Structure probing data (2A3 and DMS) for a 177-nucleotide construct. The reactions ran in a buffer of 150 mM KOAc, 10 mM MgCl2 and 150 mM bicine (pH 8.5), at 24 C. The DMS profile rests on 2,001 reads.

RNA sequence: GGGAACGACUCGAGUAGAGUCGAAAAAGCUUCUUGACGGUAGAUAAGUGUGGAUGGAGUGAGAGGAGGAGUCCUGUGUAUGUCGUUGUCAACGUCGACCGAGCGUCCGUGCCAAGCGCUGCGUCACAUGAAUUCCUACCUUCGGGUAGGAAUUCAUAAAAGAAACAACAACAACAAC
Reactivity to 2A3 in 0.01 (KOAc 150mM, MgCl2 10mM, bicine 150mM(pH8.5), 24C), signal-to-noise 1, nucleotides 027 to 126: a060g010c100u020u000c020u030u040g040a000c010g000g000u040a000g090a070u040a120a250g010u000g070u120g160g080a050u030g000g120a130g000u020g020a060g000a010g000g020a000g000g000a000g080u010c000c020u140g010u000g080u040a080u030g000u030c010g070u050u010g030u020c040a060a070c110g060u050c000g070a100c000c040g030a000g000c000g010u020c020c100g000u020g000c060c000a100a000g020c060g000c040u090g020c020g040u070c000a100c000
Reactivity to DMS in 0.01 (KOAc 150mM, MgCl2 10mM, bicine 150mM(pH8.5), 24C), signal-to-noise 1, nucleotides 027 to 126: a070g020c070u000u000c090u000u000g050a110c110g020g030u020a050g000a040u030a000a060g010u010g000u010g030g030a040u000g000g040a070g020u010g000a100g010a070g010g020a100g040g010a050g050u000c000c010u000g000u020g060u010a070u000g000u000c010g000u000u000g000u000c090a070a060c190g040u010c040g020a020c060c060g010a110g010c000g000u020c030c020g030u000g010c070c030a110a090g000c070g020c020u020g000c050g000u000c050a010c170